Structure probing data (2A3 and DMS) for a 177-nucleotide construct. For DMS the reverse transcriptase was MarathonRT. The RNA was probed in 150 mM KOAc, 10 mM MgCl2 and 150 mM bicine (pH 8.5) at 24 C.
[RMDB]
RNA sequence: GGGAACGACUCGAGUAGAGUCGAAAAGAUAUGGACAUCGGUACAGACCGAGGAUCGAGAUUCGGAAACGAAUCUCGGGAGGUCUUAACCGAGUGUCCUAAGUCAAAGCCUCGCUUCGGCGAGGCAACUAUCAAAAGGAGUUCGCUCCUUUUGAUAGAAAAGAAACAACAACAACAAC
Reactivity to 2A3 in 0.01 (KOAc 150mM, MgCl2 10mM, bicine 150mM(pH8.5), 24C), signal-to-noise 5, nucleotides 027 to 126: g030a020u070a030u150g000g010a020c010a030u020c030g020g030u190a050c090a090g000a000c010c050g110a300g030g010a010u010c000g000a000g000a010u000u010c010g020g000a040a050a050c000g000a000a010u010c000u000c000g000g000g000a000g010g020u010c000u030u030a040a030c010c010g030a010g020u070g000u000c000c000u010a110a030g040u020c060a150a070a060g000c010c000u010c010g010c020u070u130c300g150g000c000g000a010g000g000c010a000a000
Reactivity to DMS in 0.01 (KOAc 150mM, MgCl2 10mM, bicine 150mM(pH8.5), 24C), signal-to-noise 7, nucleotides 027 to 126: g010a040u000a300u010g000g000a010c010a110u000c000g010g020u000a160c300a080g000a020c000c000g010a090g020g000a040u000c000g000a010g000a010u000u000c000g010g010a090a060a140c000g010a010a000u000c000u000c000g000g000g010a030g030g010u000c000u000u000a230a050c010c000g000a080g020u010g010u000c000c000u000a010a070g010u000c030a120a140a210g010c000c000u000c000g020c000u000u010c240g030g010c000g000a010g010g010c000a010a030